[RMDB]
RNA sequence: GGGAACGACUCGAGUAGAGUCGAAAAUCGCCGGCCACUCAAUGUCCGGCAUCAGGGUCAGCAUUUCGCGGAACACCCAGGGGCCGAUGCCCAGGGCCAGCCGGGUGGCGCGGCGGGAAAGCCCGCGCGCAGAACUACUCUUCGGAGUAGUUCUGCGAAAAGAAACAACAACAACAAC
Reactivity to DMS in 0.01 (KOAc 150mM, MgCl2 10mM, bicine 150mM(pH8.5), 24C), signal-to-noise 4, nucleotides 027 to 126: u000c010g030c010c010g010g010c030c000a030c020u020c050a150a150u000g020u000c020c040g000g010c020a010u000c040a110g010g010g000u000c070a150g010c040a210u000u010u010c210g010c050g000g000a090a100c140a090c020c010c030a120g000g010g020g040c080c080g010a050u000g000c020c020c230a110g030g010g000c030c220a080g000c160c120g010g000g020u000g000g010c000g020c000g000g020c000g000g000g000a040a120a140g000c010c000c010g030c240g000
Reactivity to 2A3 in 0.01 (KOAc 150mM, MgCl2 10mM, bicine 150mM(pH8.5), 24C), signal-to-noise 2, nucleotides 027 to 126: u030c010g000c010c000g030g030c010c000a010c020u020c020a060a130u120g000u020c010c020g010g040c010a020u030c010a030g030g010g080u040c020a030g050c040a150u070u220u300c190g010c070g050g060a100a080c060a120c050c020c040a060g080g000g020g020c020c010g000a010u050g010c010c030c030a040g000g020g000c040c030a000g110c120c110g000g060g020u000g000g000c250g000c000g150g020c030g000g000g010a060a020a000g050c010c000c020g010c030g010

The record gives the reactivity of an RNA of 177 nucleotides to DMS and 2A3. As a SHAPE reagent, 2A3 marks flexible, mostly unpaired nucleotides at the ribose 2'-OH. The RNA was probed in 150 mM KOAc, 10 mM MgCl2 and 150 mM bicine (pH 8.5) at 24 C.